[RMDB]
RNA sequence: GGGAACGACUCGAGUAGAGUCGAAAAAUAAUUGUAUGAAAAUAAAGGAUGUUUCUCAAGUGAAGAAUGUUUAAUGAAUGUGAAUUCAUACAAGGGAGUAUUAUUCACCUAUUAAGAAGAGACAACCCUCAGGAGAAAUAUUCGUAUUUCUCCUGAGAAAAGAAACAACAACAACAAC
Reactivity to DMS in 0.01 (KOAc 150mM, MgCl2 10mM, bicine 150mM(pH8.5), 24C), signal-to-noise 1, nucleotides 027 to 126: a110u000a120a020u000u000g010u000a090u020g000a090a120a080a080u010a050a110a200g010g020a140u000g030u000u000u000c000u010c010a040a130g010u030g010a050a040g010a030a050u030g000u000u000u000a070a030u010g000a030a030u000g000u000g020a110a000u000u000c000a000u000a090c100a080a040g020g040g010a070g010u010a020u000u000a080u000u000c000a020c000c090u000a130u000u000a000a080g010a090a010g000a040g030a000c010a030a030c090c110

This 177-nucleotide RNA was probed chemically with DMS. The reactions ran in a buffer of 150 mM KOAc, 10 mM MgCl2 and 150 mM bicine (pH 8.5), at 24 C. For DMS the reverse transcriptase was MarathonRT.